[RMDB]
RNA sequence: GGGAACGACUCGAGUAGAGUCGAAAAUGGCGACCAGGUAGGCCAGGGUGGAGAGGGGAUCCACUGACCUGGGCACCCCCCGACUGGAGCUCCUCGCCUAGCCAUCCUCUUGUCUCUGCAGUACAAGCGAGAUCCUAUCAUUCGUGAUAGGAUCUCGAAAAGAAACAACAACAACAAC
Reactivity to DMS in 0.01 (KOAc 150mM, MgCl2 10mM, bicine 150mM(pH8.5), 24C), signal-to-noise 2, nucleotides 027 to 126: u010g010g020c010g000a100c090c090a020g000g000u020a100g040g010c030c040a050g000g010g040u000g000g010a140g000a100g000g000g030g010a180u010c010c010a010c050u000g000a100c100c120u000g010g010g000c160a130c040c020c020c000c000c020g000a120c050u000g000g000a110g010c050u000c020c040u000c130g020c030c030u000a090g010c000c040a040u000c020c000u010c090u000u000g000u000c040u000c110u000g000c100a060g010u010a050c120a040a090g010
Reactivity to 2A3 in 0.01 (KOAc 150mM, MgCl2 10mM, bicine 150mM(pH8.5), 24C), signal-to-noise 1, nucleotides 027 to 126: u100g030g010c040g020a100c050c120a040g070g060u090a020g040g010c020c020a030g030g060g130u070g040g110a170g010a080g120g020g010g000a020u050c010c000a020c050u030g050a050c030c000u000g000g010g000c010a080c020c040c000c000c000c000g000a000c030u020g030g000a000g130c000u000c000c000u000c010g020c000c010u000a000g030c000c030a050u060c020c020u040c000u050u030g000u000c000u010c010u150g000c040a040g010u030a030c020a050a000g030
Chemical mapping of a 177-nucleotide RNA with DMS and 2A3. For DMS the reverse transcriptase was MarathonRT. It was measured as part of the RMDB library OK2TST. For 2A3 the reverse transcriptase was SuperScript II with manganese. The RNA was probed in 150 mM KOAc, 10 mM MgCl2 and 150 mM bicine (pH 8.5) at 24 C.